[RMDB]
Structure probing data (2A3 and DMS) for a 177-nucleotide construct. For 2A3, 10,139 sequencing reads were counted. Values cover nucleotides 27 to 126.
RNA sequence: GGGAACGACUCGAGUAGAGUCGAAAAGGGCACUGUGGGAACGGAAAGAGGAGAUCUCAGAGUUCGCAGUUCGGAGGUCGGAGCAGGAGUAGGGGCUUAUACAAUCAUCGUCUGCUGGCAUUGAUGACAGUAUACUGGCAUUCGUGCCAGUAUACUGAAAAGAAACAACAACAACAAC
Reactivity to 2A3 in 0.01 (KOAc 150mM, MgCl2 10mM, bicine 150mM(pH8.5), 24C), signal-to-noise 9, nucleotides 027 to 126: g010g010g000c040a030c060u040g030u090g090g050g030a060a020c040g020g070a120a100a020g030a020g060g050a090g020a090u050c020u010c020a020g010a000g030u040u060c050g010c040a010g010u040u090c040g030g020a040g000g040u060c030g000g020a040g020c040a030g010g050a030g020u080a060g010g020g000g020c020u050u060a060u020a150c090a050a060u040c020a020u020c050g050u010c030u050g040c020u020g010g030c020a070u020u160g040a070u070g030a060
Reactivity to DMS in 0.01 (KOAc 150mM, MgCl2 10mM, bicine 150mM(pH8.5), 24C), signal-to-noise 6, nucleotides 027 to 126: g000g010g010c060a070c070u000g020u030g010g010g000a070a040c090g000g010a060a090a070g000a050g000g010a120g000a080u020c020u010c030a070g000a110g000u000u010c090g000c090a090g000u030u010c060g020g010a080g010g030u030c050g010g000a110g020c050a050g000g000a080g010u010a050g010g000g000g000c070u010u020a060u010a070c150a080a080u020c060a050u010c040g000u000c040u000g000c020u020g000g000c060a090u020u010g010a060u010g010a150